[RMDB]
RNA sequence: GGGAACGACUCGAGUAGAGUCGAAAAAGGUGCGCGCCGGCCUGAAGGCCAUCUACCUGUCGGGCUGGCAGGUCGCCGGCGAUGCCAACCUGUCCGGGCACACCUACCCCGACCAGAGCCUGUAUCCGAAAACGCGUAUCUUCGGAUACGCGUUUUCAAAAGAAACAACAACAACAAC
Reactivity to 2A3 in 0.01 (KOAc 150mM, MgCl2 10mM, bicine 150mM(pH8.5), 24C), signal-to-noise 2, nucleotides 027 to 126: a000g040g000u010g040c040g010c060g070c010c000g010g010c020c020u060g060a050a030g000g000c040c030a090u050c080u120a030c010c000u050g140u060c030g030g130g080c070u070g000g000c000a000g000g000u070c010g020c060c030g010g000c020g060a050u120g040c040c000a020a040c010c020u000g050u060c020c010g050g000g000c020a030c000a000c010c010u090a090c010c000c000c000g000a020c040c030a030g020a010g080c000c030u070g020u050a070u110c060c110
An RNA of 177 nucleotides, treated with 2A3 and read out base by base. Reactivities are given for positions 27 through 126. The reactions ran in a buffer of 150 mM KOAc, 10 mM MgCl2 and 150 mM bicine (pH 8.5), at 24 C.